[RMDB]
RNA sequence: GGGAACGACUCGAGUAGAGUCGAAAAUGACAUGAGUGAUCUGGUGCGUGUGGAGCGCAAAGGUCGGGUGACCACGGUGAUUCUGAACCGGCCGGCCUCCCGCAACGCGGUCAACGGCCCGACCGCCUCCUUAGGGAGAUUUCGAUCUCCCUAAGGAAAAAGAAACAACAACAACAAC
Reactivity to DMS in 0.01 (KOAc 150mM, MgCl2 10mM, bicine 150mM(pH8.5), 24C), signal-to-noise 4, nucleotides 027 to 126: u010g020a080c100a080u010g000a120g010u010g010a060u000c020u010g020g020u000g010c050g020u000g010u000g010g000a120g020c090g000c070a040a070a080g010g010u000c000g010g000g020u000g020a090c100c070a060c080g010g000u010g010a170u010u010c140u030g010a120a070c030c020g010g000c050c040g010g010c010c010u000c000c040c000g020c100a050a070c130g020c010g010g010u000c020a080a100c110g010g000c010c030c070g000a050c020c010g000c070c190
Reactivity to 2A3 in 0.01 (KOAc 150mM, MgCl2 10mM, bicine 150mM(pH8.5), 24C), signal-to-noise 2, nucleotides 027 to 126: u090g000a000c010a080u120g020a020g120u070g010a110u020c030u060g060g010u030g070c060g000u110g080u140g090g060a000g040c110g060c060a060a120a050g010g000u050c040g020g000g020u100g050a040c010c060a050c090g000g050u130g030a220u210u070c060u080g030a060a030c000c000g020g080c070c030g000g000c000c000u000c020c030c000g020c030a020a070c040g000c010g050g030u010c030a080a020c070g060g000c000c000c000g030a020c020c000g010c000c020